[RMDB]
An RNA of 177 nucleotides, treated with 2A3 and DMS and read out base by base.
The RNA was probed in 150 mM KOAc, 10 mM MgCl2 and 150 mM bicine (pH 8.5) at 24 C.
RNA sequence: GGGAACGACUCGAGUAGAGUCGAAAACAGGCUGAUGUUAGGGUUGAUUUGCAGAUUCAGAGCUAUGGUGUCCCUGAUUGGUAUUCCCAAAUUACAGUUGCAAACAUCCCCCCAGGAGCUGACACCACAUUAUGCUCCUCUUCGGAGGAGCAUAAUGAAAAGAAACAACAACAACAAC
Reactivity to 2A3 in 0.01 (KOAc 150mM, MgCl2 10mM, bicine 150mM(pH8.5), 24C), signal-to-noise 1, nucleotides 027 to 126: c010a010g010g020c020u020g010a080u020g090u240u130a110g070g000g110u040u120g190a160u070u090u100g010c050a010g080a140u060u000c040a010g000a010g080c000u110a010u160g010g000u010g040u000c020c000c010u030g070a160u010u130g050g000u020a110u020u100c000c000c000a030a070a040u160u080a060c080a030g090u070u110g080c000a020a070a030c020a170u110c040c010c000c000c020c000a040g130g000a040g030c020u010g010a020c010a000c040c000a000
Reactivity to DMS in 0.01 (KOAc 150mM, MgCl2 10mM, bicine 150mM(pH8.5), 24C), signal-to-noise 4, nucleotides 027 to 126: c040a040g010g010c010u010g000a040u000g010u010u010a120g020g000g010u010u000g000a130u000u000u010g020c040a060g000a120u000u000c010a030g010a010g010c040u000a110u010g010g010u000g010u000c000c020c000u000g000a120u000u000g010g000u010a160u000u010c010c000c000a060a070a120u010u000a110c140a100g020u000u000g010c050a040a030a080c120a130u010c020c010c010c020c010c020a080g000g000a040g000c020u000g000a050c030a030c020c010a050

The data come from the RNA Mapping Database (RMDB), library OK2TST. Reactivities are given for positions 27 through 126. 2A3 adducts were read by reverse transcription with SuperScript II with manganese.